RNA sequence: GGGAACGACUCGAGUAGAGUCGAAAAGAUCCAAUUUUAACUGGCGAAAAUAACUACGCUCUCGCUGCUUAAUCGAAGCACAGUAGAUUGAAGCUUAAUCCUUACACAAGGUGUUUGGACGAGACAUCACCCGGAAGCCGUGGCUUCGAGGCAAUCCGAUUAGUAUUACGUUCGCGUAAUACUAAUCAAAAGAAACAACAACAACAAC
Reactivity to 2A3 in 0.01 (KOAc 150mM, MgCl2 10mM, bicine 150mM(pH8.5), 24C), signal-to-noise 6, nucleotides 027 to 156: g080a020u090c030c050a090a090u100u100u100u150a130a070c090u080g030g000c020g060a080a050a050a070u120a100a060c090u130a050c090g010c040u010c000u000c020g040c050u040g000c000u040u060a020a010u060c020g020a030a000g060c120a050c060a200g060u040a020g010a060u020u090g130a020a000g000c000u000u020a010a020u010c000c000u020u020a000c020a010c050a110a080g170g010u010g010u010u000u020g000g000a010c010g010a000g020a020c020a050u060c030a040c000c020c000g030g010a030a020g000c020c020g030u030g060g020c020u000u010c030g010a050g010g000c010a020a050u040c030c020
Reactivity to DMS in 0.01 (KOAc 150mM, MgCl2 10mM, bicine 150mM(pH8.5), 24C), signal-to-noise 3, nucleotides 027 to 156: g030a140u010c000c030a060a090u000u000u000u000a050a100c050u000g020g040c040g000a130a100a100a130u010a100a150c050u010a150c030g010c050u000c090u000c060g020c030u000g000c050u000u000a090a100u010c030g020a100a160g050c020a070c060a050g020u020a080g000a080u010u010g010a040a070g000c000u010u010a150a080u000c020c000u000u000a040c040a040c020a100a120g070g010u000g010u000u010u000g010g010a050c020g010a180g010a080c040a070u000c050a080c050c010c040g010g010a090a120g010c020c060g030u020g040g020c010u000u000c010g010a060g020g010c040a090a120u000c080c100